[RMDB]
RNA sequence: GGGAACGACUCGAGUAGAGUCGAAAAAGAUGAGUUCGCUCAUCUAAAAAACCUUUGUGCAAUAGGGAGUGGGAGAGAGGGACACCCAUUGGGUGUCCUCCCCACCUCUCAGCAUCGAUCUAUUGCACUCUGGUAAAAAGCCAAGUUCGCUUGGCAAUAAGAGAUAGUAAUUCGUUACUAUCUCUUAAAAAGAAACAACAACAACAAC
Reactivity to 2A3 in 0.01 (KOAc 150mM, MgCl2 10mM, bicine 150mM(pH8.5), 24C), signal-to-noise 3, nucleotides 027 to 156: a000g010a000u010g000a010g050u060u090c190g100c060u020c010a020u000c010u080a080a120a000a010a010a030c020c000u010u000u010g000u000g000c000a000a000u010a010g030g020g000a060g030u000g010g120g000a100g000a010g010a020g080g030g000a000c000a000c000c010c140a280u120u260g030g000g000u000g000u010c000c000u030c000c000c000c000a030c010c000u000c000u000c000a070g060c010a070u260c040g030a010u030c010u010a000u010u000g000c000a000c000u000c010u000g010g000u100a140a080a060a020a000g000c000c000a000a000g000u040u080c170g030c140u000u000g000g010c000a000a000
Reactivity to DMS in 0.01 (KOAc 150mM, MgCl2 10mM, bicine 150mM(pH8.5), 24C), signal-to-noise 2, nucleotides 027 to 156: a060g000a020u000g000a010g020u000u010c300g030c000u000c000a000u000c000u040a000a030a090a090a070a040c000c000u000u000u000g010u000g000c010a010a020u000a020g000g030g010a180g040u000g000g000g030a050g020a060g020a080g000g010g010a030c010a020c010c000c000a300u000u020g080g070g040u000g000u020c000c000u000c010c000c000c000a080c120c050u000c020u010c010a060g010c070a170u000c110g000a180u000c000u000a020u000u000g010c000a000c010u000c040u000g000g020u020a040a070a030a090a100g010c010c000a010a130g000u000u000c270g000c050u000u000g020g000c000a050a040